[RMDB]
RNA sequence: GGGAACGACUCGAGUAGAGUCGAAAAAGUAGGCUGUUUUUAAUAGUACUAACUUAAUCCACUGAUGGCUAUAUAGAAGCAUUGUGUAAUCCCCGAGCACCUCUGUGGUGUAUUGGAUUCAUGACAUACAUAUUACUAACUUCGGUUAGUAAUAUGUAAAAGAAACAACAACAACAAC
Reactivity to DMS in 0.01 (KOAc 150mM, MgCl2 10mM, bicine 150mM(pH8.5), 24C), signal-to-noise 7, nucleotides 027 to 126: a030g020u000a040g000g010c010u000g010u000u000u010u020u030a020a030u000a010g010u010a120c010u010a050a050c020u010u010a080a140u010c050c020a070c120u020g000a060u000g010g020c020u010a070u020a140u010a100g010a080a060g000c020a060u010u000g020u000g010u000a050a060u000c030c000c120c130g010a090g020c010a020c010c010u010c300u030g020u010g000g020u000g000u000a060u010u010g000g010a090u010u000c070a050u010g000a110c220a100u000
Reactivity to 2A3 in 0.01 (KOAc 150mM, MgCl2 10mM, bicine 150mM(pH8.5), 24C), signal-to-noise 9, nucleotides 027 to 126: a000g030u020a010g010g000c010u020g130u060u030u050u140u250a110a070u030a020g010u050a300c010u030a200a040c000u010u060a040a040u030c030c010a050c070u070g080a100u070g100g010c030u040a040u050a020u040a270g100a110a010g020c010a030u050u100g040u000g010u080a040a050u030c030c010c000c010g030a030g010c000a010c010c020u080c140u250g200u230g060g000u010g000u020a220u010u080g030g010a020u020u070c040a040u150g060a030c010a050u040